[RMDB]
RNA sequence: GGGAACGACUCGAGUAGAGUCGAAAAGCCAGUCAGAGGGCGCUACCAUGCAAACUAGGGCUGGCUACUCUUGCACAUAAUCACCUUUCUAUAAUAACCAGUGCAAGAAGGGUUAUUAUACCAUUUAAAAAUCGUGAAUGCUUCGGCAUUCACGAAACAAAAAUCGAAUGUUCGCAUUCGAUUUUUGAAAAGAAACAACAACAACAAC
Reactivity to 2A3 in 0.01 (KOAc 150mM, MgCl2 10mM, bicine 150mM(pH8.5), 24C), signal-to-noise 5, nucleotides 027 to 156: g000c000c000a000g010u000c000a000g010a000g050g010g000c010g010c020u150a300c110c070a110u300g000c010a020a030a040c000u010a010g000g010g020c000u000g000g000c000u000a000c000u000c000u010u030g000c000a010c010a050u150a100a120u180c030a190c040c000u100u250u170c100u130a020u010a020a040u020a000a020c010c010a010g010u010g000c010a010a010g010a000a010g000g000g000u000u000a000u010u000a010u020a040c010c030a100u120u170u300a080a130a040a030a070u030c010g000u000g000a000a000u000g000c010u080u050c200g060g000c000a000u000u020c000a010c000g000a000a000a000
Reactivity to DMS in 0.01 (KOAc 150mM, MgCl2 10mM, bicine 150mM(pH8.5), 24C), signal-to-noise 2, nucleotides 027 to 156: g020c000c000a010g040u030c030a060g030a050g000g020g030c300g000c020u010a150c230c130a090u000g000c040a130a300a180c050u000a050g020g020g020c010u000g000g000c000u010a020c030u010c010u000u010g000c000a070c030a070u000a060a130u000c060a100c070c030u010u000u010c100u000a070u000a030a070u000a030a040c000c010a300g000u000g000c040a060a050g020a070a110g020g010g020u000u000a050u000u000a040u000a070c130c040a190u010u000u000a060a060a110a130a120u010c010g040u000g010a050a030u010g000c020u000u010c280g020g020c000a000u000u010c000a000c000g000a000a050a070
Description:
Conditions: 150 mM KOAc, 10 mM MgCl2 and 150 mM bicine (pH 8.5), 24 C. An RNA of 207 nucleotides, treated with 2A3 and DMS and read out base by base. Values cover nucleotides 27 to 156. For 2A3 the reverse transcriptase was SuperScript II with manganese. The data come from the RNA Mapping Database (RMDB), library M2RFOK.